RNA sequence: GGGAACGACUCGAGUAGAGUCGAAAAUAAAGCGGUCGAUUUUCGGAGGAAUAUGCAUAUACUCAUCCAUCCGCUCCUCCAGCCAGCUGACAUUGGCUGGCUCUUGCUUGUAGGGACGCAAUUCCCUAGCGUAUUAUGCCUUCGGGCAUAAUACGCUAAAAGAAACAACAACAACAAC
Reactivity to 2A3 in 0.01 (KOAc 150mM, MgCl2 10mM, bicine 150mM(pH8.5), 24C), signal-to-noise 2, nucleotides 027 to 126: u060a020a090a010g000c000g010g160u150c160g060a270u040u160u050u060c060g000g000a010g070g050a020a080u160a110u140g030c120a080u090a060u040a300c010u020c110a080u000c020c030a080u030c000c000g020c000u010c000c000u000c000c000a000g000c000c000a000g010c030u120g030a180c070a300u100u220g000g050c010u000g000g000c000u000c020u010u130g020c070u070u140g120u210a040g000g010g000a000c100g070c180a010a070u000u000c000c000c000u000
Reactivity to DMS in 0.01 (KOAc 150mM, MgCl2 10mM, bicine 150mM(pH8.5), 24C), signal-to-noise 1, nucleotides 027 to 126: u010a010a030a060g000c040g050g020u020c280g160a150u000u050u000u060c070g000g000a000g000g050a150a080u000a070u000g040c250a100u000a020u000a050c070u000c050a060u000c010c040a170u000c070c080g070c020u000c000c040u070c040c000a080g000c000c000a000g000c000u020g000a260c150a230u040u020g000g000c000u000g000g080c000u000c100u000u000g020c210u010u000g000u000a020g000g000g060a050c070g010c110a090a040u000u000c000c000c000u000
The record gives the reactivity of an RNA of 177 nucleotides to 2A3 and DMS. Conditions: 150 mM KOAc, 10 mM MgCl2 and 150 mM bicine (pH 8.5), 24 C. It was measured as part of the RMDB library OK1LIB. 2A3 is a SHAPE reagent: it acylates the 2'-hydroxyl of flexible nucleotides of all four kinds.